[RMDB]
RNA sequence: GGGAACGACUCGAGUAGAGUCGAAAAGAUAUGGACCGAAUUGCUCAUCGAUCUACAUGGAGGCUCGGAAACGAGUGAAGUGUAGGGAGAGCAACGGUCCUAAGUCAAAGCGCGCUUCGGCGCGCAACCAAUCAGGACACUUCGGUGUCCUGAUUGGAAAAGAAACAACAACAACAAC
Reactivity to DMS in 0.01 (KOAc 150mM, MgCl2 10mM, bicine 150mM(pH8.5), 24C), signal-to-noise 1, nucleotides 027 to 126: g010a020u000a300u030g000g000a000c030c010g020a090a190u000u000g030c000u000c000a280u000c190g040a040u010c000u000a020c000a010u000g000g010a300g050g000c000u000c000g000g000a040a010a130c010g000a000g040u000g000a300a150g000u000g000u000a000g000g000g010a000g000a000g060c010a000a090c000g000g000u000c000c000u000a000a030g000u000c000a120a090a160g010c000g010c000g080c000u010u000c110g000g010c050g080c000g000c010a050a040
Reactivity to 2A3 in 0.01 (KOAc 150mM, MgCl2 10mM, bicine 150mM(pH8.5), 24C), signal-to-noise 1, nucleotides 027 to 126: g040a000u060a050u160g010g000a000c030c000g060a300a300u080u000g020c000u000c020a260u300c130g050a080u000c010u000a010c000a010u010g000g070a120g300g090c010u000c010g000g000a120a010a020c010g020a000g000u220g020a050a010g030u020g010u010a000g000g000g020a030g000a010g000c000a010a010c010g010g000u030c000c000u010a060a010g030u000c030a060a210a000g020c000g000c010g000c020u000u170c250g110g000c000g000c020g000c010a000a000
Conditions: 150 mM KOAc, 10 mM MgCl2 and 150 mM bicine (pH 8.5), 24 C. Structure probing data (DMS and 2A3) for a 177-nucleotide construct. As a SHAPE reagent, 2A3 marks flexible, mostly unpaired nucleotides at the ribose 2'-OH. The 2A3 profile rests on 2,377 reads. The data come from the RNA Mapping Database (RMDB), library TTRDEL.